[RMDB]
RNA sequence: GGGAACGACUCGAGUAGAGUCGAAAACAGGCACCCACCACUAUGCCCUGCUGUUUCAUAUUUUUAGCAGAGACAGGGUUUCGCCAUGUUGACCGGGCUGAUCUUGAACUCCUGGGCUCAAGUGUUCCUCCUGCCUUGGCCUCCCAGAGUGCUGGGAACCAUGCUCCAUAUUCGUAUGGAGCAUGGUAAAAGAAACAACAACAACAAC
Reactivity to 2A3 in 0.01 (KOAc 150mM, MgCl2 10mM, bicine 150mM(pH8.5), 24C), signal-to-noise 2, nucleotides 027 to 156: c030a000g040g000c000a040c020c010c000a050c010c040a050c050u190a130u180g000c010c040c030u020g000c020u000g090u020u070u090c190a170u090a300u120u050u140u080u070a060g000c060a000g020a020g100a060c010a030g000g040g000u000u040u000c070g000c000c040a060u080g040u060u020g160a140c060c060g080g010g000c020u000g040a110u090c060u100u210g070a060a040c040u030c050c000u050g120g060g000c050u020c060a040a030g020u030g060u090u020c000c030u030c010c010u060g030c000c000u030u120g040g010c010c000u030c010c000c000a020g050a040g070u110g020c030u000g010g010g010a000